[RMDB]
RNA sequence: GGGAACGACUCGAGUAGAGUCGAAAAUGGUAACUGACAUGGGCAGAAGAGACGUUUUAAGGCAAACUCGUCUCCUGAUCACCCGCACGAGGGCUCGUGCAGAGUCUUAGCUGAAAGGAUGCGAAGGAAUGCACCUGGUGUUCGCACCAGGUGCAUUAAAAGAAACAACAACAACAAC
Reactivity to DMS in 0.01 (KOAc 150mM, MgCl2 10mM, bicine 150mM(pH8.5), 24C), signal-to-noise 1, nucleotides 027 to 126: u020g010g000u000a000a050c090u000g110a160c030a200u000g000g000g000c000a110g000a160a070g000a060g000a050c020g000u000u000u000u040a060a130g000g000c190a130a120a040c030u000c020g010u000c000u000c020c090u060g000a100u000c100a130c020c000c040g000c140a060c040g000a020g000g000g070c060u030c010g000u000g000c230a130g000a040g060u000c000u000u000a100g000c050u050g030a040a040a180g000g040a030u000g000c010g010a110a150g030g000
Reactivity to 2A3 in 0.01 (KOAc 150mM, MgCl2 10mM, bicine 150mM(pH8.5), 24C), signal-to-noise 1, nucleotides 027 to 126: u220g060g090u110a020a020c020u110g000a000c000a260u180g000g000g000c000a000g000a190a020g020a020g010a030c050g040u030u020u030u020a060a100g120g020c040a100a110a000c000u000c000g010u000c000u000c000c020u000g000a020u000c020a090c010c010c000g020c040a090c090g110a170g000g100g020c000u010c030g170u240g000c080a020g030a000g000u010c000u080u070a040g100c030u030g010a080a000a020g060g000a020u080g020c000g030a010a010g000g080

Annotation
Structure probing data (DMS and 2A3) for a 177-nucleotide construct. High 2A3 reactivity points to a flexible backbone, as in loops and unpaired stretches. 2A3 adducts were read by reverse transcription with SuperScript II with manganese. The reactions ran in a buffer of 150 mM KOAc, 10 mM MgCl2 and 150 mM bicine (pH 8.5), at 24 C.